[RMDB]
RNA sequence: GGGAACGACUCGAGUAGAGUCGAAAAACGCCAAAGGCUUCGGCCCGGCGAAAGCCGAGAGGUUCCUGCGCCUUCGCGAGGAAGUUAAGGCCGCAAGGAUCGCCAUGGCUAAUUGCCCGAUAUCGGCCAUCCCUUCAGUCUUCGGACUGAAGGGAUGAAAAGAAACAACAACAACAAC
Reactivity to DMS in 0.01 (KOAc 150mM, MgCl2 10mM, bicine 150mM(pH8.5), 24C), signal-to-noise 2, nucleotides 027 to 126: a100c200g010c000c010a050a180a120g010g000c000u020u000c150g020g000c040c000c050g030g010c000g000a060a100a110g000c000c000g010a060g000a080g020g020u000u000c000c010u000g010c000g000c010c020u000u010c110g020c070g000a140g010g010a160a100g000u000u000a000a030g010g020c030c070g020c040a060a060g000g000a060u000c030g030c010c040a200u020g010g020c020u010a060a100u000u020g000c000c010c070g000a150u000a080u000c030g000g060c100
Reactivity to 2A3 in 0.01 (KOAc 150mM, MgCl2 10mM, bicine 150mM(pH8.5), 24C), signal-to-noise 2, nucleotides 027 to 126: a020c060g060c030c010a140a020a030g000g000c040u090u100c150g080g000c000c000c020g050g070c000g030a150a020a010g000c000c000g040a060g020a030g070g000u040u030c010c000u000g030c000g000c010c000u040u040c000g000c010g040a170g140g300a280a060g010u000u030a000a030g000g010c140c030g000c050a090a100g010g010a010u030c030g000c070c000a030u120g000g010c010u030a120a170u160u150g070c000c000c010g020a060u070a080u230c050g030g000c040